[RMDB]
RNA sequence: GGGAACGACUCGAGUAGAGUCGAAAAGUGGCAUGAUGCUAAUGUGACUUAUGAGCAAGAAGUGGCAAAUACCCUACAUGCCCAAAUCCGUGCAAUCUCUGGCACUAGGGGGUCAUCUGGGUUUGGAUCACAUAGCAGUGAACAAAUGGAUAAAAGAUAAUUACGCUAAUUUCGAUUAGCGUAAUUAAAAAGAAACAACAACAACAAC
Reactivity to DMS in 0.01 (KOAc 150mM, MgCl2 10mM, bicine 150mM(pH8.5), 24C), signal-to-noise 4, nucleotides 027 to 156: g030u010g000g020c020a080u010g000a140u000g010c020u000a060a110u010g020u000g000a070c050u000u010a120u000g030a140g030c010a070a140g010a090a120g030u000g020g010c020a050a070a130u010a060c010c030c010u000a090c080a060u000g030c030c000c020a030a040a060u010c020c040g030u000g010c250a070a060u000c030u000c030u000g000g030c080a090c090u010a150g020g000g020g020g020u000c030a050u000c040u000g020g010g020u000u000u000g010g010a110u000c030a020c030a050u000a060g000c020a080g020u010g050a070a230c050a030a050a070u000g010g000a130u010a060a050a070a110g000a290
Reactivity to 2A3 in 0.01 (KOAc 150mM, MgCl2 10mM, bicine 150mM(pH8.5), 24C), signal-to-noise 4, nucleotides 027 to 156: g040u040g030g010c030a030u020g030a070u050g100c030u050a140a080u080g020u020g020a020c020u100u140a080u180g070a040g050c040a060a040g040a090a020g080u090g050g000c020a040a060a080u100a080c010c000c000u020a040c030a050u040g000c000c000c010a010a070a020u040c020c010g000u020g000c020a100a130u050c070u020c040u130g110g000c020a030c060u070a060g010g000g010g010g020u030c010a030u020c050u070g040g020g000u030u030u040g030g020a040u030c000a000c000a040u010a010g010c000a020g030u020g060a040a020c040a030a070a050u110g080g020a050u100a110a100a000a010g050a030
This 207-nucleotide RNA was probed chemically with DMS and 2A3. The 2A3 profile rests on 5,881 reads. The RNA was probed in 150 mM KOAc, 10 mM MgCl2 and 150 mM bicine (pH 8.5) at 24 C. Source: RMDB library OK3TST, as collected in RNAgym.